[RMDB]
Structure probing data (2A3 and DMS) for a 177-nucleotide construct. The data come from the RNA Mapping Database (RMDB), library OK2TRN. 2A3 adducts were read by reverse transcription with SuperScript II with manganese.
RNA sequence: GGGAACGACUCGAGUAGAGUCGAAAAAAGGUUGUCGCCCGGCCAAAUCGAAGAGUAUGUCUUUCAUCUACAAGGGGCCAAGGCCAAUGUGAUGCACAGCAGAGUCGAAGCCGUAUGCCCUGACCUCCGUUACUGAAAGAUUCGUCUUUCAGUAACGAAAAGAAACAACAACAACAAC
Reactivity to 2A3 in 0.01 (KOAc 150mM, MgCl2 10mM, bicine 150mM(pH8.5), 24C), signal-to-noise 3, nucleotides 027 to 126: a000a000g060g010u020u010g100u070c030g030c000c000c000g010g030c010c010a030a040a060u130c040g050a060a010g030a040g110u160a130u190g090u020c020u010u100u070c030a110u020c040u100a070c050a130a110g080g000g000g000c020c000a050a070g050g000c000c020a030a030u100g000u050g050a070u070g020c090a060c070a240g030c020a020g030a020g120u060c020g030a050a010g010c020c000g000u070a050u150g010c000c000c000u020g030a050c010c030u040c020
Reactivity to DMS in 0.01 (KOAc 150mM, MgCl2 10mM, bicine 150mM(pH8.5), 24C), signal-to-noise 7, nucleotides 027 to 126: a080a050g010g010u000u000g010u010c080g010c030c040c030g000g000c030c030a040a070a080u010c090g010a060a050g010a090g010u000a070u010g010u000c050u000u000u000c060a050u000c070u000a050c130a070a100g010g010g010g010c020c050a090a130g020g010c010c050a070a090u000g010u000g010a100u000g000c090a040c110a100g010c060a100g000a140g010u000c030g010a130a130g010c010c020g000u000a100u000g010c000c000c010u000g000a070c050c030u010c100